An RNA of 177 nucleotides, treated with DMS and 2A3 and read out base by base. Source: RMDB library OK1LIB, as collected in RNAgym. The RNA was probed in 150 mM KOAc, 10 mM MgCl2 and 150 mM bicine (pH 8.5) at 24 C.
[RMDB]
RNA sequence: GGGAACGACUCGAGUAGAGUCGAAAACGUCGGCGUGUCAGAAGACUUUGCGGCACUUCGCAAUAACACCGCAACGGCUAAGUUGAUCGAAUACACGAACCACCUCACCAAGAAGCAUCGUGAUGCGUAGAAAGUCGGAGUUCGCUCCGACUUUCUAAAAAGAAACAACAACAACAAC
Reactivity to DMS in 0.01 (KOAc 150mM, MgCl2 10mM, bicine 150mM(pH8.5), 24C), signal-to-noise 1, nucleotides 027 to 126: c050g040u030c090g010g000c000g000u000g000u010c010a000g000a100a220g000a030c040u000u000u000g060c050g000g080c000a090c150u000u000c000g040c050a120a040u000a180a040c080a200c000c000g000c060a020a050c140g000g000c040u050a000a100g000u020u000g000a040u000c070g010a160a090u000a120c260a060c080g000a030a070c040c050a040c030c010u000c000a060c010c000a000a040g070a090a130g050c020a090u000c110g020u000g000a050u020g010c000g050
Reactivity to 2A3 in 0.01 (KOAc 150mM, MgCl2 10mM, bicine 150mM(pH8.5), 24C), signal-to-noise 2, nucleotides 027 to 126: c030g000u010c030g030g000c000g000u060g000u020c020a030g070a090a000g020a130c000u070u020u020g030c000g000g010c020a060c080u120u180c000g000c050a000a080u150a110a060c080a030c080c040g000c040a020a020c010g060g000c020u140a060a060g100u110u080g180a120u080c010g050a070a020u120a100c060a030c000g000a010a050c000c000a030c000c000u040c070a040c000c000a030a020g090a100a000g030c040a000u080c060g000u080g040a030u100g020c070g000